[RMDB]
Conditions: 150 mM KOAc, 10 mM MgCl2 and 150 mM bicine (pH 8.5), 24 C.
The record gives the reactivity of an RNA of 177 nucleotides to 2A3 and DMS.
Values are in units of 0.01, from 0 to 300, in steps of 10.
RNA sequence: GGGAACGACUCGAGUAGAGUCGAAAAACGUGAUGGUACGCCAUCACGAAAGGCGUGAUGACGCCGAGGACACCUGAGCGGUGAUGACUCUUCGCUUCGCUGACCACAGUCCGAUACGUCGGACUGAAGGUGUAUUGAAAUUCGUUUCAAUACACCUAAAAGAAACAACAACAACAAC
Reactivity to 2A3 in 0.01 (KOAc 150mM, MgCl2 10mM, bicine 150mM(pH8.5), 24C), signal-to-noise 9, nucleotides 027 to 126: a000c010g000u000g000a000u010g000g020u050a040c270g060c030c000a000u000c000a000c000g020a040a010a000g010g000c020g020u080g100a300u210g100a070c000g000c010c000g010a060g040g040a030c010a020c030c020u090g100a070g090c110g030g020u030g020a060u130g030a030c010u000c000u040u020c020g010c020u020u020c020g050c120u050g120a040c000c000a010c010a020g000u000c000c000g000a010u010a050c250g080u010c000g000g000a000c000u000g010a010
Reactivity to DMS in 0.01 (KOAc 150mM, MgCl2 10mM, bicine 150mM(pH8.5), 24C), signal-to-noise 9, nucleotides 027 to 126: a120c010g010u000g010a020u000g000g010u010a100c260g020c010c000a010u000c000a000c000g000a020a070a090g010g010c010g020u000g010a150u030g010a050c010g020c000c010g000a120g010g010a190c040a040c010c010u000g020a120g020c170g000g020u000g000a090u010g000a050c020u000c010u010u000c020g010c030u000u000c030g020c090u010g000a230c020c020a280c010a010g000u000c000c000g010a020u010a070c160g020u000c000g000g000a010c000u000g000a040
The data come from the RNA Mapping Database (RMDB), libraries RFM100 and RFMREP.